[RMDB]
Chemical mapping of a 177-nucleotide RNA with DMS. Source: RMDB library TTRINS, as collected in RNAgym. For DMS the reverse transcriptase was MarathonRT.
RNA sequence: GGGAACGACUCGAGUAGAGUCGAAAAGAUAUGGACCCCAUGAUAGACUGGCCUAGGUAGGCUGCGUGUCGGAAACGACACCAGCCUAUAAUCUAGGAACUACCAGUCUAUCAUGGGGUCCUAAGUCCAUAACUCGUUACUUCGGUAACGAGUUAUGAAAAGAAACAACAACAACAAC
Reactivity to DMS in 0.01 (KOAc 150mM, MgCl2 10mM, bicine 150mM(pH8.5), 24C), signal-to-noise 2, nucleotides 027 to 126: g000a090u000a300u020g010g020a030c020c000c000c000a000u000g000a010u000a010g000a010c000u010g000g000c010c000u000a000g000g060u000a010g000g000c000u000g020c300g040u010g040u000c000g020g010a150a130a210c000g030a020c000a000c020c000a000g000c010c000u010a000u010a150a080u030c010u000a020g050g010a070a010c020u020a300c020c040a010g010u000c000u000a000u000c000a010u000g010g010g010g010u000c000c000u000a020a050g000u000c030